[RMDB]
RNA sequence: GGGAACGACUCGAGUAGAGUCGAAAAACAUCCAGCUAUCUCCAUUUCACAGAUGAGGUUCUGUUAACACCUGCAUAGUAUUUCCCUAUAGGGAUUUAUCAAAAUGUAUCCAACCAUGCUGCUUUUCACUAUUAUAAACAGUGCUGUGAGGAAUAUCGAUUCUUAUAAAGUUCGCUUUAUAAGAAUCAAAAGAAACAACAACAACAAC
Reactivity to 2A3 in 0.01 (KOAc 150mM, MgCl2 10mM, bicine 150mM(pH8.5), 24C), signal-to-noise 5, nucleotides 027 to 156: a000c030a050u070c030c010a020g050c040u050a020u070c050u010c050c020a110u080u220u140c060a060c020a030g080a060u070g030a080g050g010u080u000c040u080g050u100u080a080a030c030a060c080c020u060g010c040a030u030a070g030u020a050u000u040u010c040c000c010u110a190u190a220g030g000g000a010u060u110u060a080u090c050a060a100a110a020u110g040u080a070u040c030c000a010a050c030c010a020u050g020c030u000g020c000u110u070u050u070c030a040c060u090a080u300u100a120u210a150a090a030c030a020g030u030g020c040u010g000u010g040a020g010g010a050a010u090a040u230c040
Reactivity to DMS in 0.01 (KOAc 150mM, MgCl2 10mM, bicine 150mM(pH8.5), 24C), signal-to-noise 2, nucleotides 027 to 156: a040c020a050u010c010c000a150g040c040u010a040u000c010u020c030c000a100u000u000u000c100a140c020a170g020a160u000g010a060g020g010u000u010c020u000g000u010u000a080a100c040a060c040c020u010g020c050a090u000a140g020u000a020u000u000u000c010c010c000u010a180u000a180g040g000g000a050u020u000u010a030u000c050a050a070a100a060u000g030u000a040u000c010c030a060a090c090c000a070u000g030c010u000g010c010u000u000u000u000c030a090c060u000a060u000u000a130u000a100a010a100c030a080g000u000g040c050u000g000u000g010a110g020g010a080a050u000a120u010c030